[RMDB]
RNA sequence: GGGAACGACUCGAGUAGAGUCGAAAAGAUAUGGAGUCACAGAGCUUUUGACGACAUUCGGAAACGAAUGAUCGAUAAGCUCGGUGACUCCUAAGUCAAAACGGAAGAGGGUUCGCCCUCUUCCGAACAUGAUUCGUCAGUUCGCUGACGAAUCAUGAAAAGAAACAACAACAACAAC
Reactivity to DMS in 0.01 (KOAc 150mM, MgCl2 10mM, bicine 150mM(pH8.5), 24C), signal-to-noise 2, nucleotides 027 to 126: g020a020u000a300u000g000g000a030g000u000c000a010c000a040g000a000g010c000u020u010u000u000g010a200c110g010a040c020a010u000u010c000g010g000a080a090a170c000g000a010a010u000g030a070u000c000g000a080u000a010a030g020c000u010c000g000g040u000g000a000c000u000c000c020u010a000a080g010u010c030a050a050a110a160c010g000g000a000a000g020a010g000g010g010u000u010c300g010c000c000c000u000c010u000u010c000c000g000a030a060
Reactivity to 2A3 in 0.01 (KOAc 150mM, MgCl2 10mM, bicine 150mM(pH8.5), 24C), signal-to-noise 3, nucleotides 027 to 126: g020a000u050a000u130g000g000a020g000u000c010a000c010a020g000a000g030c000u140u280u300u300g150a110c000g000a000c000a000u010u010c010g010g010a050a040a020c000g020a010a020u110g080a300u000c000g040a060u030a190a000g000c000u000c000g010g000u000g010a000c000u000c000c000u000a000a000g010u010c050a020a000a040a090c010g000g000a020a000g010a000g050g080g020u100u200c280g180c000c000c000u030c000u000u020c000c000g000a000a010

The record gives the reactivity of an RNA of 177 nucleotides to DMS and 2A3. It was measured as part of the RMDB library TTRDEL. For 2A3, 3,912 sequencing reads were counted. Conditions: 150 mM KOAc, 10 mM MgCl2 and 150 mM bicine (pH 8.5), 24 C. For 2A3 the reverse transcriptase was SuperScript II with manganese. In probing experiments dimethyl sulfate is read out at A N1 and C N3, which are open when not base-paired.